[RMDB]
RNA sequence: GGGAACGACUCGAGUAGAGUCGAAAACAGUGAUGGAAACAUCACUGAAAAACGUGGCAGCGCAUCACGAAAAAGUCGAUCGAAUACCGAUCGACAAGCGCUAAAGUCAUGCCGAAAGGCAUGACAAAAUCCUCGUCCGAUUCGUCGGACGAGGAUUAAAAGAAACAACAACAACAAC
Reactivity to 2A3 in 0.01 (KOAc 150mM, MgCl2 10mM, bicine 150mM(pH8.5), 24C), signal-to-noise 2, nucleotides 027 to 126: c000a010g000u000g010a020u010g000g020a040a010a000c000a000u010c000a000c000u000g010a110a000a000a000a000c000g000u000g050g000c070a010g000c010g000c020a040u010c010a000c050g240a140a000a000a000a000g000u000c000g000a000u000c000g040a010a040u190a300c040c000g000a010u000c000g000a000c000a000a000g000c000g000c020u030a040a000a000g030u000c000a010u000g000c010c000g020a030a000a000g000g000c000a010u000g000a000c000a000a040
Reactivity to DMS in 0.01 (KOAc 150mM, MgCl2 10mM, bicine 150mM(pH8.5), 24C), signal-to-noise 2, nucleotides 027 to 126: c020a020g040u010g020a000u010g000g000a170a100a290c000a000u000c000a000c010u000g020a000a030a000a180a180c020g000u010g000g020c100a050g000c000g030c000a300u110c000a000c010g030a060a010a080a030a000g000u000c000g030a000u000c010g000a300a170u090a160c140c040g000a010u010c000g000a000c000a040a090g000c000g040c010u000a100a040a130g010u000c000a000u000g000c010c010g020a090a070a110g000g000c000a000u010g000a000c020a000a010